[RMDB]
This 177-nucleotide RNA was probed chemically with DMS and 2A3. The reactions ran in a buffer of 150 mM KOAc, 10 mM MgCl2 and 150 mM bicine (pH 8.5), at 24 C. Source: RMDB library OK2TST, as collected in RNAgym.

RNA sequence: GGGAACGACUCGAGUAGAGUCGAAAAGGCUAGAGUGGAUGGAAAGUAAUCAUCCGACUGAAAUCGAUAUGGGUCUGGCCAGGGUCUCCCAAGUGUACCGGCAAAUGGGACUGGACUUAUCUACCUCGAUGAGUGUCAAAUUCGUUUGACACUCAUCAAAAGAAACAACAACAACAAC
Reactivity to DMS in 0.01 (KOAc 150mM, MgCl2 10mM, bicine 150mM(pH8.5), 24C), signal-to-noise 5, nucleotides 027 to 126: g020g010c030u000a060g010a090g030u010g010g020a010u010g000g000a130a100a130g010u020a130a130u010c020a030u000c030c020g000a100c050u010g010a070a100a100u010c070g010a130u000a080u010g000g000g010u000c020u000g000g010c010c010a100g000g000g010u010c090u000c010c000c010a060a110g020u000g010u010a080c120c100g010g000c050a030a080a080u010g020g000g010a110c110u010g010g000a040c040u000u000a050u000c030u000a090c070c050u000c210
Reactivity to 2A3 in 0.01 (KOAc 150mM, MgCl2 10mM, bicine 150mM(pH8.5), 24C), signal-to-noise 4, nucleotides 027 to 126: g020g000c030u030a000g010a000g120u070g000g010a000u020g000g160a230a110a120g170u210a120a070u110c010a010u000c020c010g040a010c030u030g050a030a050a090u060c030g010a010u030a090u270g080g000g000u010c020u020g020g020c000c000a010g050g000g010u010c060u030c060c000c020a010a010g070u050g000u050a140c060c040g030g010c030a050a050a070u070g010g000g010a010c000u040g010g000a000c010u030u020a040u030c020u060a060c010c020u020c030